[RMDB]
RNA sequence: GGGAACGACUCGAGUAGAGUCGAAAAUGACUGUUGGGCCCUAGCAUCCCCAACAGUCUAAUGAUGUAGUGGUGUGGAGUACGCGAGAGCGUACUCAGCAUCCGAGAGGAUGCGAUUCCGACCCACAUUAUUGCAUCUAAAGGUCGGCCGCUAGGGGAAAUAUCAGUCGUUUCGACGACUGAUAUUUAAAAGAAACAACAACAACAAC
Reactivity to 2A3 in 0.01 (KOAc 150mM, MgCl2 10mM, bicine 150mM(pH8.5), 24C), signal-to-noise 1, nucleotides 027 to 156: u110g000a010c000u000g010u000u010g000g010g030c060c000c010u000a030g000c000a130u260c040c000c000c000a000a000c000a010g000u000c000u000a040a040u040g010a000u010g000u030a020g010u010g040g000u010g000u020g010g000a020g010u000a000c000g000c020g030a080g000a010g050c030g000u000a010c000u000c000a000g000c000a000u010c000c000g010a020g020a030g070g000a000u000g000c020g010a050u210u070c060c100g070a080c020c000c030a010c000a000u030u050a010u000u040g000c010a000u000c000u090a110a060a010g060g030u130c050g020g020c030c010g010c010u030a010g000g000g020g010
Reactivity to DMS in 0.01 (KOAc 150mM, MgCl2 10mM, bicine 150mM(pH8.5), 24C), signal-to-noise 1, nucleotides 027 to 156: u000g020a010c010u000g000u000u000g030g050g030c070c000c020u000a070g050c040a170u000c080c000c010c000a010a030c000a020g020u000c030u000a010a080u000g030a070u000g020u000a000g020u010g020g020u060g010u000g000g030a050g030u000a010c020g030c000g000a300g000a300g000c000g040u000a000c000u000c010a060g000c000a000u000c000c000g010a300g000a300g000g020a040u000g000c020g000a220u010u000c020c060g040a100c060c020c010a040c010a030u000u000a020u010u000g000c020a040u000c020u000a100a140a130g000g010u000c000g040g010c100c030g000c000u000a020g010g010g020g010

Structure probing data (2A3 and DMS) for a 207-nucleotide construct. It was measured as part of the RMDB library OK3TST. Reactivities are given for positions 27 through 156. For 2A3, 1,185 sequencing reads were counted.